[RMDB]
RNA sequence: GGGAACGACUCGAGUAGAGUCGAAAAUCACUUCAUGCCGUAGUUAUGAUUGUGAACAAUUUCUGUCCCGAACGCUGACCGCAAAUUGAGUUGGUUGGCAACGGAGAUACGGAUGCAGAGAUGCAGACAAGUACAGCGUUUUCGAACGCUGUACUUGAAAAGAAACAACAACAACAAC
Reactivity to DMS in 0.01 (KOAc 150mM, MgCl2 10mM, bicine 150mM(pH8.5), 24C), signal-to-noise 3, nucleotides 027 to 126: u010c030a040c020u000u000c040a010u000g010c040c170g020u000a110g030u000u000a080u000g010a040u010u030g010u010g010a060a110c170a070a080u000u000u010c070u010g000u010c040c000c000g000a040a220c220g020c010u000g010a010c010c020g000c040a090a160a190u010u010g020a140g030u010u000g110g000u010u010g020g020c020a030a260c050g000g000a080g010a090u000a030c100g010g010a100u000g000c020a010g000a130g000a200u010g010c060a070g020a130
Reactivity to 2A3 in 0.01 (KOAc 150mM, MgCl2 10mM, bicine 150mM(pH8.5), 24C), signal-to-noise 3, nucleotides 027 to 126: u020c000a000c000u020u030c010a000u040g070c020c070g270u220a130g080u120u140a070u100g040a090u050u200g000u020g070a060a030c070a080a100u010u120u030c040u060g080u010c020c010c010g010a060a040c120g000c010u010g000a000c000c010g010c100a090a120a270u260u240g070a110g070u150u160g110g000u000u020g000g000c000a010a010c020g010g010a210g000a070u080a060c050g070g010a020u020g010c010a000g020a010g000a020u040g000c040a020g050a090

This 177-nucleotide RNA was probed chemically with DMS and 2A3.
For 2A3, 2,374 sequencing reads were counted.
The RNA was probed in 150 mM KOAc, 10 mM MgCl2 and 150 mM bicine (pH 8.5) at 24 C.
High DMS reactivity at an A or C suggests that its Watson-Crick edge is free.